The record gives the reactivity of an RNA of 177 nucleotides to DMS and 2A3. For 2A3, 1,089 sequencing reads were counted. Values cover nucleotides 27 to 126.
[RMDB]
RNA sequence: GGGAACGACUCGAGUAGAGUCGAAAAAAGUUUUUGAUUAUCAUCAAUCGCUUAUGGGGUCGGCGUUAUGGGACACGUGGAGGCAUAACCCCAACUGAUACUAUAGAGGUUUUAAUCAUGGCAACUGCGAUGUCUAGAGUUUCGACUCUAGACAUCGAAAAGAAACAACAACAACAAC
Reactivity to DMS in 0.01 (KOAc 150mM, MgCl2 10mM, bicine 150mM(pH8.5), 24C), signal-to-noise 2, nucleotides 027 to 126: a090a050g030u010u000u010u000u000g010a060u000u010a060u000c200a070u000c040a050a050u010c080g000c030u010u000a100u010g000g010g010g010u000c140g020g040c130g050u010u000a030u000g020g010g010a140c090a080c140g030u010g000g010a100g010g000c040a030u010a080a120c080c040c010c040a010a130c050u010g000a080u010a070c060u000a120u000a050g000a090g000g010u000u000u000u000a040a070u010c060a020u000g010g020c030a030a080c090u000g000
Reactivity to 2A3 in 0.01 (KOAc 150mM, MgCl2 10mM, bicine 150mM(pH8.5), 24C), signal-to-noise 1, nucleotides 027 to 126: a000a000g110u060u010u000u020u040g080a060u050u130a020u070c050a000u020c020a050a070u070c020g020c080u080u040a020u160g030g010g000g010u010c000g050g010c020g010u000u050a040u150g040g000g050a050c080a010c060g040u050g050g090a060g000g050c040a020u080a080a060c000c020c030c000a000a000c000u020g020a040u020a100c040u030a060u090a180g100a110g000g010u040u030u020u130a070a020u050c020a010u050g080g000c040a060a010c070u110g020
The reactions ran in a buffer of 150 mM KOAc, 10 mM MgCl2 and 150 mM bicine (pH 8.5), at 24 C. It was measured as part of the RMDB library OK2TRN.